[RMDB]
This 207-nucleotide RNA was probed chemically with 2A3 and DMS. The reactions ran in a buffer of 150 mM KOAc, 10 mM MgCl2 and 150 mM bicine (pH 8.5), at 24 C. Values cover nucleotides 27 to 156. The 2A3 profile rests on 2,582 reads.

RNA sequence: GGGAACGACUCGAGUAGAGUCGAAAAGCAGGCCACAAAUCGUUGAUGUGGCAUACUUCACCUCAUCAUAUUGUGUGGGGUUGAAAACUACAUUGAAACAAUUUGUUAAUCAAUAUAUUGAGGUGGAAUAUGCCACAUCAGCAGUUUAGAUGAUUAAGAUUGUGAAUGAGUUCGCUCAUUCACAAUCAAAAGAAACAACAACAACAAC
Reactivity to 2A3 in 0.01 (KOAc 150mM, MgCl2 10mM, bicine 150mM(pH8.5), 24C), signal-to-noise 4, nucleotides 027 to 156: g080c050a030g060g110c040c020a050c020a050a090a040u100c040g010u010u000g000a000u000g000u000g000g000c000a000u000a000c000u000u000c000a000c010c000u010c010a010u010c010a010u000a020u020u040g020u010g020u070g010g000g000g000u020u070g070a040a030a000a020c030u080a030c030a100u080u140g100a110a070a020c040a060a110u060u080u200g060u090u220a080a070u090c000a000a000u010a000u000a030u030u050g000a000g000g000u010g000g000a000a000u010a000u000g000c010c000a000c000a000u000c000a000g000c000a000g000u000u020u050a070g000a090u130g050a020u230u170a100a060
Reactivity to DMS in 0.01 (KOAc 150mM, MgCl2 10mM, bicine 150mM(pH8.5), 24C), signal-to-noise 1, nucleotides 027 to 156: g020c040a100g020g000c040c050a110c080a050a010a020u000c000g000u000u000g020a030u000g020u010g000g030c000a010u000a000c040u000u000c030a030c000c010u000c010a020u000c110a100u000a060u010u000g030u000g030u000g000g000g000g060u000u000g000a090a020a190a100c030u000a050c020a240u000u020g000a270a170a110c070a080a180u000u000u000g030u010u000a170a130u000c030a000a000u000a050u000a140u020u000g000a050g000g050u010g070g020a030a020u000a030u000g020c000c010a020c010a000u000c000a020g060c030a040g000u000u000u000a000g000a130u000g020a200u000u000a130a260